[RMDB]
RNA sequence: GGGAACGACUCGAGUAGAGUCGAAAACAGAACUAAUUCGUUAGUUCUGGCAUAUAACCUUCACCAAUUAGGUUCAAAUAAGUGGUUAAAAUAAAAAUAAAACGGGGUCUGCAUUCGUGCAGACCAACAAUGAUCAUUAAUUCGUUAAUGAUCAUUGAAAAGAAACAACAACAACAAC
Reactivity to 2A3 in 0.01 (KOAc 150mM, MgCl2 10mM, bicine 150mM(pH8.5), 24C), signal-to-noise 5, nucleotides 027 to 126: c000a010g010a000a000c000u010a030a030u070u120c150g060u050u010a000g000u000u000c000u010g000g010c060a130u300a010u050a100a010c000c000u010u030c030a010c020c010a010a040u040u030a060g020g020u110u210c060a040a060a110u060a110a020g020u030g030g020u050u090a070a070a040a060u160a050a110a040a110a040u160a040a090a040a010c050g280g100g000g000u000c000u000g000c000a010u030u060c080g040u020g000c000a000g010a000c000c000a000a000
Reactivity to DMS in 0.01 (KOAc 150mM, MgCl2 10mM, bicine 150mM(pH8.5), 24C), signal-to-noise 4, nucleotides 027 to 126: c000a010g010a010a010c000u000a010a040u010u020c200g010u000u010a000g000u000u000c010u000g000g000c200a100u000a120u000a060a030c010c010u000u000c070a050c010c000a020a080u000u000a010g000g010u010u010c240a060a040a040u000a010a030g040u000g000g000u000u020a040a060a070a120u010a040a060a070a090a100u010a060a040a040a100c180g020g000g000g020u000c000u000g000c000a040u000u010c190g020u000g010c000a010g000a000c000c000a020a030
The record gives the reactivity of an RNA of 177 nucleotides to 2A3 and DMS.
The RNA was probed in 150 mM KOAc, 10 mM MgCl2 and 150 mM bicine (pH 8.5) at 24 C.
For 2A3, 7,234 sequencing reads were counted.
The DMS profile rests on 5,032 reads.
2A3 is a SHAPE reagent: it acylates the 2'-hydroxyl of flexible nucleotides of all four kinds.